The record gives the reactivity of an RNA of 177 nucleotides to DMS and 2A3.
The DMS profile rests on 2,895 reads.
2A3 adducts were read by reverse transcription with SuperScript II with manganese.

RNA sequence: GGGAACGACUCGAGUAGAGUCGAAAAGCGUGGAACCGAGCCAAAGAUGACGUGGCGCCGUGGUGGGCCGAGAAUUCCAAGGAGUGCUACUCGUCGGGGUUGGCCGAUCUGGCCCAGGACCUGGCUAUGUGUAAUGAACGUUCGCGUUCAUUACACAAAAAGAAACAACAACAACAAC
Reactivity to DMS in 0.01 (KOAc 150mM, MgCl2 10mM, bicine 150mM(pH8.5), 24C), signal-to-noise 3, nucleotides 027 to 126: g000c110g030u000g010g000a090a120c060c020g000a090g010c040c040a050a130a080g000a120u010g010a080c100g000u010g000g010c100g020c060c050g020u010g000g020u000g010g000g010c010c020g020a100g000a060a100u010u010c030c010a060a100g000g000a050g010u000g010c170u000a040c020u000c010g000u000c100g000g000g010g040u000u000g000g000c020c020g010a040u000c010u010g000g000c010c010c070a120g000g000a090c060c030u000g000g000c050u000a130
Reactivity to 2A3 in 0.01 (KOAc 150mM, MgCl2 10mM, bicine 150mM(pH8.5), 24C), signal-to-noise 1, nucleotides 027 to 126: g030c080g020u040g010g020a020a050c060c030g070a050g000c030c000a120a090a020g130a130u120g030a050c100g060u030g000g000c020g010c040c030g050u040g040g070u020g010g000g000c000c020g030a050g070a060a100u130u030c000c000a030a010g110g000a040g060u080g090c000u020a050c020u040c060g160u030c080g040g000g000g040u060u120g050g000c000c010g000a030u050c050u040g020g000c000c000c000a010g000g060a000c030c040u020g050g010c050u080a080